[RMDB]
RNA sequence: GGGAACGACUCGAGUAGAGUCGAAAAGAAGAGGACAUGCUAUCCACAAUGUGUUUGAUAAGCUGAUAUAGGACAGGGAUUUUUUUCACUGUUGUGUCAGUUUAUCAAACCCAUAUCUGGAUGAUAACAGGUUAUCCUAGUUCGCUAGGAUAACCUGAAAAGAAACAACAACAACAAC
Reactivity to DMS in 0.01 (KOAc 150mM, MgCl2 10mM, bicine 150mM(pH8.5), 24C), signal-to-noise 3, nucleotides 027 to 126: g020a100a080g000a030g020g020a070c080a070u020g000c080u030a050u010c000c010a040c170a100a020u000g010u000g010u000u010u010g000a000u000a000a000g010c000u030g010a010u000a040u020a090g020g010a020c000a000g000g000g000a010u000u000u000u020u050u020u000c010a050c020u000g010u010u000g000u000g010u000c000a020g010u010u000u000a000u000c000a000a000a000c010c010c000a010u000a070u000c300u000g010g000a030u010g000a120u020a080a200
Reactivity to 2A3 in 0.01 (KOAc 150mM, MgCl2 10mM, bicine 150mM(pH8.5), 24C), signal-to-noise 6, nucleotides 027 to 126: g090a030a030g060a030g060g050a040c060a090u180g050c040u100a020u020c010c000a000c040a020a010u010g010u000g000u000u010u010g010a000u000a000a000g000c000u000g020a000u020a000u030a070g190g050a020c000a000g000g040g010a040u130u000u030u050u000u050u080c100a130c070u000g010u020u010g030u010g000u030c000a000g000u000u000u000a000u000c000a010a000a000c010c000c000a010u040a130u020c060u020g000g000a010u050g010a040u060a110a040